The record gives the reactivity of an RNA of 177 nucleotides to 2A3 and DMS. For 2A3 the reverse transcriptase was SuperScript II with manganese. For DMS the reverse transcriptase was MarathonRT. The DMS profile rests on 9,283 reads. Source: RMDB library M2PK50, as collected in RNAgym.

RNA sequence: GGGAACGACUCGAGUAGAGUCGAAAAGAACGCCACUUCGGUGGCGUUCGAAGAUCUACGACACGUAGAUCACUAUCGUGUGAGACAUCGAUAGAUGUCAAAUGGUCCGGAAGUUCGCUUCCGGAAAGAAAUCAUAUGCUUUCGAGCAUAUGAUUUCAAAAGAAACAACAACAACAAC
Reactivity to 2A3 in 0.01 (KOAc 150mM, MgCl2 10mM, bicine 150mM(pH8.5), 24C), signal-to-noise 5, nucleotides 027 to 126: g000a010a000c010g000c010c000a010c000u030u080c190g120g000u000g000g000c000g000u000u000c000g000a000a000g000a000u000c000u020a010c000g260a120c120a020c300g020u000a000g000a000u010c000a010c010u170a160u150c140g060u140g020u040g190a140g000a040c010a010u030c020g060a040u090a290g040a030u040g050u020c000a040a070a110u130g080g020u000c000c010g000g010a000a010g010u060u140c220g030c100u000u000c000c000g000g000a000a000a000
Reactivity to DMS in 0.01 (KOAc 150mM, MgCl2 10mM, bicine 150mM(pH8.5), 24C), signal-to-noise 6, nucleotides 027 to 126: g000a010a010c000g010c000c000a010c000u000u010c170g030g020u000g010g010c000g010u000u000c000g000a090a090g000a020u000c010u000a010c010g010a170c230a100c100g030u010a000g000a020u010c030a140c110u000a070u000c120g010u010g010u000g010a300g000a050c010a010u010c000g000a120u020a070g010a040u010g000u000c030a040a070a090u000g010g010u000c000c000g000g000a020a010g010u000u020c210g000c000u000u000c000c000g010g000a000a020a090